[RMDB]
Structure probing data (DMS and 2A3) for a 177-nucleotide construct. Source: RMDB library M2PK90, as collected in RNAgym. For DMS, 3,161 sequencing reads were counted. Conditions: 150 mM KOAc, 10 mM MgCl2 and 150 mM bicine (pH 8.5), 24 C. High DMS reactivity at an A or C suggests that its Watson-Crick edge is free. Reactivities are given for positions 27 through 126.
RNA sequence: GGGAACGACUCGAGUAGAGUCGAAAAAGAAAUAGCGAUAAUCGUAAGAGAAAUGUCCUUCACAUAGCGCUACGCACAGAACUAUUAGUAGCGCAAUAGCUAUUGAAGGACUUUACCUGCCAAAAAAUCCAUUAAAAGGUUUCGACCUUUUAAUGGAAAAAGAAACAACAACAACAAC
Reactivity to DMS in 0.01 (KOAc 150mM, MgCl2 10mM, bicine 150mM(pH8.5), 24C), signal-to-noise 4, nucleotides 027 to 126: a120g010a070a070a070u010a090g010c020g000a150u010a090a090u010c060g030u000a070a080g010a110g000a040a060a050u010g010u000c000c000u000u000c000a020c300a040u000a030g010c000g000c070u000a030c010g010c120a070c120a120g010a080a120c190u010a110u000u020a080g010u000a040g000c000g000c040a020a030u010a070g020c080u000a010u000u000g000a020a010g010g000a010c000u000u000u000a040c050c020u010g020c050c070a000a020a050a060a070a080
Reactivity to 2A3 in 0.01 (KOAc 150mM, MgCl2 10mM, bicine 150mM(pH8.5), 24C), signal-to-noise 2, nucleotides 027 to 126: a020g130a000a070a030u170a040g060c010g030a060u090a180a110u170c020g040u000a010a010g080a020g050a100a080a050u080g000u000c020c000u000u010c010a060c010a070u070a010g020c030g010c020u030a020c010g030c030a060c010a100g170a290a040c080u080a190u300u160a050g000u020a010g050c000g000c010a000a000u000a000g000c010u040a020u080u060g000a000a000g010g000a010c000u000u010u000a030c000c000u030g040c010c000a010a290a070a050a000a040

2A3 is a SHAPE reagent: it acylates the 2'-hydroxyl of flexible nucleotides of all four kinds.